This 177-nucleotide RNA was probed chemically with 2A3. The 2A3 profile rests on 375 reads. Reactivities are given for positions 27 through 126. The data come from the RNA Mapping Database (RMDB), library OK1LIB. The RNA was probed in 150 mM KOAc, 10 mM MgCl2 and 150 mM bicine (pH 8.5) at 24 C.
RNA sequence: GGGAACGACUCGAGUAGAGUCGAAAAGAAGCAUAUUAUGCUACUAUAUAGCUGCAUCUCAUUCAUUUUACGAUGUCGUUAUAGGGGUGAGAGCAGUAGCCACUCCUCCUCUCUGUGUAGCAAUAUGCACCGGCACCUGCUUCGGCAGGUGCCGGUGAAAAGAAACAACAACAACAAC
Reactivity to 2A3 in 0.01 (KOAc 150mM, MgCl2 10mM, bicine 150mM(pH8.5), 24C), signal-to-noise 1, nucleotides 027 to 126: g160a050a030g000c000a020u000a080u050u050a170u270g080c020u040a000c000u000a000u030a030u120a190g040c000u000g000c040a280u060c000u000c000a110u300u030c000a120u040u030u150u060a080c180g130a090u190g170u300c020g020u010u010a020u050a010g000g010g010g000u000g000a300g000a010g000c030a020g060u020a000g000c000c000a010c000u000c000c000u020c050c000u000c000u050c050u130g060u000g000u190a000g020c000a000a000u000a000u010g000